RNA sequence: GGGAACGACUCGAGUAGAGUCGAAAAGGGUUUGAGCCAUCGCCCGAAUAGGAUGGGUGAUACAAGUCGUCAUUGUACGCGACGUAGUACGUACUCAUUAGUGCGAAAGCACGGUUAGUCCGACUAGGCAGGGACGAUCUUCUGUCAAUACUUAGAAAAUAUUAUCAGUAUUCGUACUGAUAAUAUUAAAAGAAACAACAACAACAAC
Reactivity to DMS in 0.01 (KOAc 150mM, MgCl2 10mM, bicine 150mM(pH8.5), 24C), signal-to-noise 5, nucleotides 027 to 156: g000g010g020u010u010u010g010a160g020c020c040a100u000c040g020c010c000c000g000a110a130u000a100g000g000a100u000g000g010g030u000g010a050u000a030c080a090a110g020u010c010g020u000c030a140u000u010g020u000a110c120g010c020g000a070c040g020u010a150g030u000a070c020g030u000a030c010u000c090a080u000u000a090g050u000g000c000g020a120a110a210g020c010a020c020g000g020u000u000a090g010u000c030c010g010a160c040u000a090g010g010c020a060g010g020g010a060c040g010a050u000c050u000u000c060u010g010u000c030a060a090u010a060c040u000u000a100g000a100a090
Reactivity to 2A3 in 0.01 (KOAc 150mM, MgCl2 10mM, bicine 150mM(pH8.5), 24C), signal-to-noise 7, nucleotides 027 to 156: g050g010g020u080u110u140g050a020g050c020c020a030u030c020g010c010c000c010g040a080a150u180a120g080g040a040u100g010g000g020u030g020a020u040a060c060a070a050g020u030c010g020u010c040a110u090u190g050u130a050c050g010c030g030a010c020g000u000a000g010u020a100c020g000u010a010c000u000c000a040u020u060a090g000u000g010c010g040a080a010a000g000c000a000c000g000g010u020u020a010g000u020c050c000g010a020c030u030a030g040g010c020a010g020g020g000a010c040g040a060u040c020u120u010c030u060g050u030c000a040a090u070a150c050u090u100a060g090a070a200